Notes: Chemical mapping of a 177-nucleotide RNA with 2A3. For 2A3 the reverse transcriptase was SuperScript II with manganese. The 2A3 profile rests on 1,703 reads. Source: RMDB library RFM100, as collected in RNAgym.

RNA sequence: GGGAACGACUCGAGUAGAGUCGAAAACUCUCCCGACGCCUCGCGCUCGGUCGAGAGUCUACCUCCUCCCCGAGUCAACCCCCUGUGAUUGCCGAAAGGUUGGGUGAAAAGCGUAGCUGCAGCCCCUCGUCUAAGUGCGAUUCGUCGCACUUAGACGAAAAGAAACAACAACAACAAC
Reactivity to 2A3 in 0.01 (KOAc 150mM, MgCl2 10mM, bicine 150mM(pH8.5), 24C), signal-to-noise 2, nucleotides 027 to 126: c010u010c030u010c020c010c000g010a030c080g010c000c110u140c130g020c020g020c020u000c000g000g040u050c080g000a010g000a030g010u000c020u050a030c010c010u000c010c000u000c000c010c000c000g020a000g010u000c010a040a060c010c000c000c000c000u030g010u020g100a210u050u180g010c000c000g070a060a020a030g030g020u080u060g040g010g000u080g020a000a070a110a070g040c080g000u070a020g000c050u030g000c010a030g010c000c000c000c020u020